An RNA of 177 nucleotides, treated with DMS and 2A3 and read out base by base. For 2A3, 2,092 sequencing reads were counted. The DMS profile rests on 4,172 reads.
[RMDB]
RNA sequence: GGGAACGACUCGAGUAGAGUCGAAAAAGAAUGUCUAAUGAAUUGUCUCAGUAUUCUUUAGGCAGAAGGUUUACAUACCAAACAACUUUGUUGAAUGGUACUACUUCUAGAAAGCGUAAAGCUGUGACAAUUAGAAACCUUUCGAGGUUUCUAAUUGAAAAGAAACAACAACAACAAC
Reactivity to DMS in 0.01 (KOAc 150mM, MgCl2 10mM, bicine 150mM(pH8.5), 24C), signal-to-noise 4, nucleotides 027 to 126: a100g000a120a100u010g020u010c010u000a010a020u000g000a040a030u000u000g000u000c030u000c030a100g030u020a070u000u000c010u000u000u000a000g010g010c030a050g000a030a010g010g010u000u000u000a080c300a230u000a010c000c000a000a030a290c010a020a020c010u010u000u010g010u000u000g010a030a300u000g000g010u000a010c070u000a050c020u000u000c000u010a130g010a070a080a070g000c110g010u000a060a040a110g010c010u000g010u000g000a100
Reactivity to 2A3 in 0.01 (KOAc 150mM, MgCl2 10mM, bicine 150mM(pH8.5), 24C), signal-to-noise 2, nucleotides 027 to 126: a020g110a100a060u100g000u030c020u020a000a040u020g010a000a010u080u040g070u020c020u050c090a050g050u070a040u010u010c020u000u010u000a000g030g000c030a010g000a020a000g010g000u030u100u030a050c040a020u040a000c000c000a010a000a000c000a030a000c020u180u220u300g010u010u000g010a010a030u000g010g010u000a000c010u000a000c000u030u000c000u020a070g170a160a080a000g050c050g040u160a170a100a000g010c010u000g040u030g070a010